[RMDB]
RNA sequence: GGGAACGACUCGAGUAGAGUCGAAAAUGCAUGUGCAAGCGAAGCGUAAGUGGAGCGGCGCAAGGCUCAGUAACGGGCGAGUAUUUGAUCUCCUAGAGUGGAUAUCCUCUGUAACCGGAGGGCAAAACAGAUUUGUGACUUUCGAGUCACAAAUCUGAAAAGAAACAACAACAACAAC
Reactivity to 2A3 in 0.01 (KOAc 150mM, MgCl2 10mM, bicine 150mM(pH8.5), 24C), signal-to-noise 1, nucleotides 027 to 126: u060g000c030a000u040g030u010g040c060a130a170g030c000g080a030a000g000c000g000u120a050a060g010u070g050g000a060g000c000g000g000c000g040c000a000a070g130g000c000u030c150a120g050u210a070a050c240g000g000g000c030g010a000g050u070a090u000u180u060g100a090u020c070u010c020c000u010a060g070a080g190u150g000g000a160u200a040u090c000c000u000c010u040g020u110a180a000c090c000g000g050a000g000g000g060c000a050a050a000a000
Reactivity to DMS in 0.01 (KOAc 150mM, MgCl2 10mM, bicine 150mM(pH8.5), 24C), signal-to-noise 3, nucleotides 027 to 126: u030g030c030a260u000g020u000g020c060a060a070g050c000g020a300a250g000c000g010u060a100a060g030u010g000g000a300g000c050g000g000c030g010c040a030a080g030g030c020u000c050a060g000u070a060a200c150g020g000g000c040g000a070g000u010a070u020u000u000g000a100u030c000u010c000c010u000a130g010a140g050u010g020g000a120u040a110u010c030c020u000c050u010g000u020a070a140c300c020g000g000a030g000g000g040c200a070a080a060a160